[RMDB]
Structure probing data (2A3 and DMS) for a 207-nucleotide construct. Conditions: 150 mM KOAc, 10 mM MgCl2 and 150 mM bicine (pH 8.5), 24 C.
RNA sequence: GGGAACGACUCGAGUAGAGUCGAAAACGGAAGCAUUAAAACCAUUCGAGCUAGUCAACGCGUGGCGUGUCUCUCCGCAGCGUGUUGGCGAAUGUAAAGAGUGACUAAGCAUGUAGUACCGAGGAUGAUAAGAGCAAUUCGUUCGCGAAUUGCUCAACAGUACAAUCCCGUUCGCGGGAUUGUACUGAAAAGAAACAACAACAACAAC
Reactivity to 2A3 in 0.01 (KOAc 150mM, MgCl2 10mM, bicine 150mM(pH8.5), 24C), signal-to-noise 4, nucleotides 027 to 156: c040g010g040a070a010g010c030a030u060u140a030a050a020a050c020c030a020u030u060c090g010a030g050c050u060a030g020u010c010a000a000c000g010c000g020u030g120g000c000g010u090g130u010c030u020c010u000c070c010g000c010a020g010c010g000u010g000u000u000g010g010c010g000a000a000u060g020u070a050a080a010g030a020g030u030g010a020c040u070a050a030g070c010a040u080g060u110a050g050u030a110c030c060g020a040g090g030a040u140g020a030u120a270a130g000a000g000c000a000a000u010u000c010g020u040u060c170g000c000g090a000a000u000u000g000c000u000c000a000a000
Reactivity to DMS in 0.01 (KOAc 150mM, MgCl2 10mM, bicine 150mM(pH8.5), 24C), signal-to-noise 2, nucleotides 027 to 156: c030g000g000a160a130g020c030a130u000u000a030a030a200a090c050c000a100u000u000c000g000a260g020c020u010a140g010u010c000a030a040c010g020c000g000u000g000g050c000g030u010g000u010c070u000c070u000c200c010g030c000a080g020c010g060u020g020u000u000g020g000c020g010a050a070u000g000u000a050a060a170g010a090g000u000g030a050c060u000a050a170g010c110a080u010g040u010a150g020u000a130c060c030g000a110g000g020a060u000g010a150u010a080a120g000a040g000c000a010a010u000u000c020g040u000u010c280g040c050g030a010a010u000u000g010c000u000c000a000a020
Source: RMDB library M2RFPK, as collected in RNAgym. 2A3 adducts were read by reverse transcription with SuperScript II with manganese.